[RMDB]
Chemical mapping of a 177-nucleotide RNA with DMS and 2A3. The data come from the RNA Mapping Database (RMDB), library OK2TST. For 2A3, 1,097 sequencing reads were counted. Conditions: 150 mM KOAc, 10 mM MgCl2 and 150 mM bicine (pH 8.5), 24 C.
RNA sequence: GGGAACGACUCGAGUAGAGUCGAAAAACAACUGGCCCGGUCGCGGCAUUACAUUACGAUGGCACAACCACCUCGAUGUAUAACGAGUUUGGCGACAGUACUACCACGCUGACCGAUCCGUUAUGGCCGAUGGCAUUGCUUUCGAGCAAUGCCAUCGAAAAGAAACAACAACAACAAC
Reactivity to DMS in 0.01 (KOAc 150mM, MgCl2 10mM, bicine 150mM(pH8.5), 24C), signal-to-noise 1, nucleotides 027 to 126: a160c050a070a030c110u010g030g030c000c040c040g000g010u000c040g040c050g000g000c130a090u000u000a060c100a010u000u010a130c170g030a030u000g010g070c070a060c200a020a300c070c040a010c300c010u020c070g050a030u000g010u010a020u010a110a090c070g000a160g000u000u000u010g000g000c130g000a080c120a120g030u000a100c040u010a000c140c060a130c090g020c030u000g000a050c080c000g040a080u000c010c010g060u000u000a050u000g010g030c130
Reactivity to 2A3 in 0.01 (KOAc 150mM, MgCl2 10mM, bicine 150mM(pH8.5), 24C), signal-to-noise 1, nucleotides 027 to 126: a010c020a000a000c040u040g020g060c000c000c000g000g010u010c050g020c040g030g000c040a040u020u150a010c010a010u050u090a040c090g000a060u080g070g000c130a040c040a120a080c030c000a030c020c010u010c050g030a050u000g050u070a050u060a140a040c030g000a030g140u090u100u100g060g000c040g030a030c040a030g030u060a040c050u050a110c010c010a060c090g030c050u050g000a080c050c000g010a010u040c000c000g020u030u000a080u070g040g000c070